The data come from the RNA Mapping Database (RMDB), library OK3TST. This 207-nucleotide RNA was probed chemically with 2A3 and DMS. Reactivities are given for positions 27 through 156. For 2A3 the reverse transcriptase was SuperScript II with manganese. For 2A3, 6,035 sequencing reads were counted. The reactions ran in a buffer of 150 mM KOAc, 10 mM MgCl2 and 150 mM bicine (pH 8.5), at 24 C. For DMS the reverse transcriptase was MarathonRT.
[RMDB]
RNA sequence: GGGAACGACUCGAGUAGAGUCGAAAAUUUCCCAGGUGAUGACCUUCCAGUUAUCCAAGGUUCAGCUCUUAAAGCUCUUGAAGGUGACUCAAAAUACGAAGAUAUCAUCAUGGAGUUGAUGAGUACUGUUGAUGAGUACAUCCCAGAACCAGAACGAGUCAGUAUAAUUAUUCGUAAUUAUACUGACAAAAGAAACAACAACAACAAC
Reactivity to 2A3 in 0.01 (KOAc 150mM, MgCl2 10mM, bicine 150mM(pH8.5), 24C), signal-to-noise 7, nucleotides 027 to 156: u030u020u000c000c000c000a000g040g070u120g010a030u020g030a010c000c000u040u000c040c040a030g020u080u080a070u080c040c040a060a040g030g000u020u040c030a020g000c020u010c010u100u210a170a120a010g010c010u010c020u140u100g050a100a010g020g000u020g030a030c000u000c040a050a060a030a050u140a040c030g050a090a030g040a100u110a030u120c010a000u000c000a010u080g200g090a140g150u060u030g020a020u020g010a010g040u040a060c020u030g020u050u020g020a070u030g010a010g020u030a090c000a050u040c010c010c000a040g030a030a020c010c050a030g150a090a040c050g130a030
Reactivity to DMS in 0.01 (KOAc 150mM, MgCl2 10mM, bicine 150mM(pH8.5), 24C), signal-to-noise 4, nucleotides 027 to 156: u010u000u000c000c000c000a130g010g020u010g000a040u000g000a040c010c010u000u010c070c060a140g010u000u000a080u000c040c020a100a100g030g020u000u000c050a160g000c020u000c060u000u000a100a110a090g020c030u000c020u000u010g020a120a090g030g040u000g010a100c010u000c010a060a080a130a150u010a090c070g000a090a100g010a110u000a030u000c020a020u000c010a080u000g030g010a160g030u000u000g000a060u000g020a060g020u010a100c090u010g020u000u000g010a260u000g010a060g010u000a090c030a070u000c000c020c040a170g000a070a060c040c030a100g010a100a110c060g010a250